[RMDB]
RNA sequence: GGGAACGACUCGAGUAGAGUCGAAAAUGGGCUACCAGUAAGCGAAAAAUGAUACAGGACGAUAAAAACAUAAUUCGAGAUUUUUCAGGAUGGAUUUUUUUAGGUAUCUAUCAAAACUAUUCUGAUGCAACGUAGAGCACGUUCGCGUGCUCUACAAGUGCUAUUAGAGCUUCGGCUCUAAUAGCACAAAAGAAACAACAACAACAAC
Reactivity to 2A3 in 0.01 (KOAc 150mM, MgCl2 10mM, bicine 150mM(pH8.5), 24C), signal-to-noise 1, nucleotides 027 to 156: u050g000g000g010c020u050a040c050c000a030g020u060a010a010g000c020g060a040a050a000a030a160u120g050a020u060a070c080a050g120g010a020c040g040a030u110a070a070a030a000a000c020a060u130a060a110u110u120c050g020a030g070a210u100u170u130u100u130c020a000g010g000a000u000g070g010a060u120u010u000u000u000u000u000a020g000g060u120a050u160c030u010a010u010c050a000a000a000a000c000u000a020u010u000c000u000g010a020u030g040c050a040a060c060g020u000a010g000a000g000c010a010c000g000u000u020c030g010c020g090u000g000c000u000c000u000a000c010a000a000